[RMDB]
RNA sequence: GGGAACGACUCGAGUAGAGUCGAAAAAAGGUCGGCCUGCGCCUCGAAAGCCCUGUUAGGGUAUGUCCAUGGACAGCUGGUUCUUCGUUCAGGGGCGAGUUACCCUUUAUGAUCAUGUAGGACGGUCGCAACGUAGAAUGUUCGCAUUCUACGUUGCAAAAGAAACAACAACAACAAC
Reactivity to DMS in 0.01 (KOAc 150mM, MgCl2 10mM, bicine 150mM(pH8.5), 24C), signal-to-noise 1, nucleotides 027 to 126: a030a050g020g000u000c020g010g000c010c000u000g010c100g000c010c010u010c040g030a050a110a150g000c000c000c000u000g050u020u010a020g010g000g010u010a020u020g010u000c010c010a070u000g010g000a030c000a040g010c090u030g000g000u010u010c050u010u000c110g000u010u010c000a030g000g000g000g000c030g010a130g050u030u020a050c000c000c000u000u000u000a140u020g030a070u000c090a060u040g030u010a060g000g000a070c040g000g000u000c060
Reactivity to 2A3 in 0.01 (KOAc 150mM, MgCl2 10mM, bicine 150mM(pH8.5), 24C), signal-to-noise 4, nucleotides 027 to 126: a010a000g100g030u040c020g080g000c000c000u060g030c030g030c040c000u020c020g050a090a050a030g010c010c010c000u030g140u140u140a080g050g000g000u050a060u130g050u000c010c000a040u030g040g000a010c020a030g020c060u170g130g000u140u040c020u070u090c050g020u000u030c020a020g020g000g010g010c020g010a040g070u060u070a080c010c000c000u000u090u030a130u060g050a070u110c070a050u170g050u090a010g000g080a040c000g000g000u070c040

Chemical mapping of a 177-nucleotide RNA with DMS and 2A3. The 2A3 profile rests on 3,720 reads. For DMS the reverse transcriptase was MarathonRT. The reactions ran in a buffer of 150 mM KOAc, 10 mM MgCl2 and 150 mM bicine (pH 8.5), at 24 C.